[RMDB]
RNA sequence: GGGAACGACUCGAGUAGAGUCGAAAACGCUGGGUACAGAGUCGCAUAGUUUCAGCUGUGGAGAUCCUGAAGCGCGCACGGGAUCGUUGAAACAGCUGAAACUAUGAACUACGACUCGUACCUGUGCUGAAGCGCGCACGGCAACCGAAAGGUGCGACACCACAAGAUUGUUCGCAAUCUUGUGGUGAAAAGAAACAACAACAACAAC
Reactivity to 2A3 in 0.01 (KOAc 150mM, MgCl2 10mM, bicine 150mM(pH8.5), 24C), signal-to-noise 3, nucleotides 027 to 156: c030g010c010u030g010g010g000u030a030c090a260g080a000g000u000c000g030c050a000u000a000g010u000u000u000c000a000g010c000u010g000u010g010g020a030g000a000u010c010c000u030g030a190a050g000c000g000c000g000c030a030c030g020g010g000a000u000c000g030u080u020g000a010a000a000c000a010g000c000u000g000a000a000a000c000u000a000u000g000a000a000c020u120a030c020g000a000c000u000c010g010u000a000c010c000u010g010u020g000c000u060g020a090a030g000c010g000c000g000c010a010c000g030g000c020a060a070c000c000g020a090a040a030g030g000u040g000c020g030a020
Reactivity to DMS in 0.01 (KOAc 150mM, MgCl2 10mM, bicine 150mM(pH8.5), 24C), signal-to-noise 2, nucleotides 027 to 156: c070g010c030u010g010g000g000u000a040c010a200g050a020g010u000c000g040c000a050u010a050g000u000u010u000c020a020g010c010u010g030u000g010g000a120g000a020u010c000c000u000g000a030a070g000c000g040c000g020c000a300c050g020g000g020a000u000c010g000u010u000g000a290a240a000c030a010g040c000u000g010a010a000a010c010u000a000u000g000a080a100c020u020a270c020g010a000c000u000c010g000u000a030c010c000u000g010u000g030c000u000g000a170a080g010c010g000c030g040c020a280c040g000g000c050a110a170c060c020g000a080a230a230g000g020u010g020c020g040a260